[RMDB]
RNA sequence: GGGAACGACUCGAGUAGAGUCGAAAACCCCCAAGGGAUUCACCUCAAGCAUCAUAUCCUUCAACUGUCGUUCGAGCGCAGAUAUUCUUGCCUCAGCCAUUCUAGCAUGCGCCUUGAACGCGUUUAUUCCCCUUAGGCUGACUUCGCGCGCGGCGGCCAUACACAUUAUCUUCGGAUAAUGUGUAUGAAAAGAAACAACAACAACAAC
Reactivity to 2A3 in 0.01 (KOAc 150mM, MgCl2 10mM, bicine 150mM(pH8.5), 24C), signal-to-noise 7, nucleotides 027 to 156: c030c000c000c010c050a060a060g060g010g010a120u110u100c070a080c060c080u100c130a120a020g050c040a080u100c020a050u110a060u200c050c030u150u140c090a140a110c110u090g020u070c020g050u220u300c010g020a010g000c010g000c030a030g070a080u090a080u140u090c080u080u230g020c010c010u020c020a010g020c010c020a110u190u120c070u100a050g050c030a070u100g010c000g020c010c020u040u110g030a090a030c050g000c010g010u020u070u070a120u070u090c010c020c000c020u020u030a030g010g000c000u000g020a040c000u030u040c040g000c010g000c000g000c000g020g010c010g000g000c000
Reactivity to DMS in 0.01 (KOAc 150mM, MgCl2 10mM, bicine 150mM(pH8.5), 24C), signal-to-noise 2, nucleotides 027 to 156: c050c030c010c050c030a150a130g000g010g020a150u010u000c040a100c030c050u010c070a110a200g010c040a090u000c070a110u020a090u000c020c020u010u010c060a100a120c070u000g020u000c030g000u000u000c020g020a040g030c010g030c020a130g010a130u000a070u000u000c060u000u020g000c030c030u000c060a150g020c040c030a090u000u000c110u000a080g030c070a100u000g000c020g020c010c020u000u000g000a060a030c060g000c000g000u000u000u010a220u020u010c010c000c010c070u000u020a110g020g020c020u010g010a070c090u010u010c020g020c040g000c020g010c010g010g000c020g030g020c080